[RMDB]
RNA sequence: GGGAACGACUCGAGUAGAGUCGAAAAGACAUUAUUGCCAGUGGUAUACAGUAUCACUAUGGUAUGACUGAAAGUUUGAGUACUAUUUCUACACUCCUGUACCACAAAAGCAAUCUCAUACUAUAGAAACAAACCUGUACUGUAGAAUAGAAGAGAAGCUAAAUCAGUGAUUCGUCACUGAUUUAGCAAAAGAAACAACAACAACAAC
Reactivity to 2A3 in 0.01 (KOAc 150mM, MgCl2 10mM, bicine 150mM(pH8.5), 24C), signal-to-noise 6, nucleotides 027 to 156: g060a010c040a090u090u160a090u090u210g060c030c020a070g060u050g060g010u070a050u010a070c010a010g030u010a040u130c060a040c070u000a010u010g010g000u000a000u010g010a020c080u100g040a070a060a100g030u040u100u120g050a040g010u020a020c010u040a110u070u150u110c100u150a110c080a060c110u120c010c070u070g010u010a010c010c000a070c050a110a120a020a000g050c010a030a060u020c020u000c020a010u010a010c000u020a000u010a040g060a090a140a020c040a050a110a040c030c040u040g030u070a030c010u010g000u020a020g020a130a080u100a060g080a140a010g060a020g040a140a020
Reactivity to DMS in 0.01 (KOAc 150mM, MgCl2 10mM, bicine 150mM(pH8.5), 24C), signal-to-noise 2, nucleotides 027 to 156: g010a070c010a090u000u010a100u000u000g020c010c030a180g050u020g050g050u000a060u000a050c030a050g020u000a050u010c070a200c000u000a000u000g030g010u010a010u000g020a100c100u030g000a170a110a140g030u000u020u020g000a240g010u000a090c010u000a130u010u000u000c080u000a100c070a100c090u010c070c090u010g030u010a060c010c020a100c040a070a020a060a050g040c030a120a130u000c030u000c020a030u000a030c000u000a050u000a050g000a170a120a240c090a140a100a090c040c070u030g040u010a010c020u000g000u000a030g010a060a090u010a060g000a050a060g010a180g010a080a220